[RMDB]
RNA sequence: GGGAACGACUCGAGUAGAGUCGAAAAGCCUGCCCGGAGAACCUGCGGCAUAUCCAGUGGGGCAAGAGGCUCCCCGGGUUCCUACCCGAGUAGGCCGGGCGACAGGCCUCACAGCCGAGAGGCACAUUGAACUGCGUCAGCGGCACCCCGGAUGGGAAUUGUGGUAACAUUUCGAUGUUACCACAAUAAAAGAAACAACAACAACAAC
Reactivity to 2A3 in 0.01 (KOAc 150mM, MgCl2 10mM, bicine 150mM(pH8.5), 24C), signal-to-noise 1, nucleotides 027 to 156: g040c020c000u010g000c000c000c010g000g010a140g080a110a110c010c050u110g070c110g100g020c010a070u070a070u160c020c000a020g020u080g040g020g000g000c030a070a000g050a010g090g070c030u160c000c000c000c000g010g060g000u110u170c010c000u000a010c000c040c140g130a080g030u000a000g030g080c000c010g000g000g010c010g010a070c110a100g150g070c020c000u030c010a020c070a010g000c000c040g040a030g020a070g070g000c020a040c030a030u200u290g080a160a050c060u050g020c010g120u060c040a100g080c040g010g000c060a070c000c000c010c020g030g070a050u080g010g000g000a060